The record gives the reactivity of an RNA of 177 nucleotides to 2A3 and DMS. The 2A3 profile rests on 5,256 reads. For 2A3 the reverse transcriptase was SuperScript II with manganese. The reactions ran in a buffer of 150 mM KOAc, 10 mM MgCl2 and 150 mM bicine (pH 8.5), at 24 C. The DMS profile rests on 6,394 reads. For DMS the reverse transcriptase was MarathonRT.

RNA sequence: GGGAACGACUCGAGUAGAGUCGAAAAGUUGCCGACGAACCUUCCAACCUUCCAAACGUCGUUUUCGACAACCUUCCAACCUUCCAAUCUACUCGAGAGGUGGAGGAGGAGGAGGAGGAGGAAUUAAUUACUCUAACAAUUUCGAUUGUUAGAGUAAAAAAGAAACAACAACAACAAC
Reactivity to 2A3 in 0.01 (KOAc 150mM, MgCl2 10mM, bicine 150mM(pH8.5), 24C), signal-to-noise 4, nucleotides 027 to 126: g050u050u070g100c030c010g010a060c040g040a060a080c010c010u030u020c030c030a120a110c060c010u100u000c020c020a080a110a080c070g020u000c020g010u080u020u060u120c010g010a010c020a070a040c020c030u140u000c020c040a100a110c040c040u070u050c020c000a070a130u020c010u050a030c010u030c020g040a040g010a020g050g030u080g010g030a060g010g020a060g010g060a040g010g060a040g010g030a030g040g040a030g020g020a000a020u090u030a040a050
Reactivity to DMS in 0.01 (KOAc 150mM, MgCl2 10mM, bicine 150mM(pH8.5), 24C), signal-to-noise 6, nucleotides 027 to 126: g000u000u000g010c060c010g010a110c110g000a070a120c040c010u000u000c010c030a120a140c050c030u000u000c020c060a070a120a180c150g000u000c010g000u000u000u000u000c030g000a040c040a100a140c060c030u010u000c010c020a090a080c050c020u000u010c040c050a160a180u000c020u000a020c040u000c020g000a070g010a130g000g020u000g000g000a050g010g010a160g010g010a130g000g000a120g000g010a170g010g010a070g000g000a300a060u000u000a030a120